Annotation: The record gives the reactivity of an RNA of 207 nucleotides to 2A3 and DMS. Conditions: 150 mM KOAc, 10 mM MgCl2 and 150 mM bicine (pH 8.5), 24 C. DMS (dimethyl sulfate) methylates the pairing face of unpaired adenines and cytosines. Source: RMDB library OK3TST, as collected in RNAgym. 2A3 adducts were read by reverse transcription with SuperScript II with manganese.
RNA sequence: GGGAACGACUCGAGUAGAGUCGAAAACUGACCUCGUUGCCAAUGGGAGCAGUGCCAAGCAUUACCCACAACUGGCUGAAUGUGUUCCAUCUGUGUCUAGCAUUCUGUUUGGAAGCUAUUGGACUUCAAAGGAAGAUGGCGACCAGAUAGAAGUCACCAUCAUCGAGUUGUUCGCAACUCGAUGAUGAAAAGAAACAACAACAACAAC
Reactivity to 2A3 in 0.01 (KOAc 150mM, MgCl2 10mM, bicine 150mM(pH8.5), 24C), signal-to-noise 2, nucleotides 027 to 156: c080u080g050a110c020c000u080c070g090u150u080g030c040c030a060a050u060g020g030g020a060g060c060a040g020u020g080c030c060a130a010g000c020a040u080u160a130c030c040c000a070c030a090a060c040u030g020g050c000u030g130a100a130u190g020u030g040u050u030c070c030a050u020c070u090g040u020g070u070c030u060a050g040c000a150u000u040c000u010g060u010u000u000g020g000a000a000g000c010u020a030u020u040g000g050a000c000u170u110c230a220a120a020g050g000a010a020g000a020u000g030g000c000g030a020c000c000a010g000a000u000a000g010a000a000g000u010c020a040c070
Reactivity to DMS in 0.01 (KOAc 150mM, MgCl2 10mM, bicine 150mM(pH8.5), 24C), signal-to-noise 1, nucleotides 027 to 156: c040u000g020a140c000c000u000c060g050u010u020g000c000c120a030a150u010g040g020g040a090g000c020a040g030u010g020c000c050a190a190g030c010a120u000u000a120c190c050c100a110c050a000a110c020u000g010g000c000u030g000a070a040u000g000u000g000u000u000c010c000a060u000c040u010g010u000g020u000c010u000a080g030c010a040u010u000c000u010g060u000u000u000g020g010a020a300g020c060u000a110u040u010g020g010a300c030u010u010c070a060a060a130g010g010a300a210g020a050u000g000g010c120g040a280c000c020a000g000a070u010a090g000a040a070g030u030c050a030c050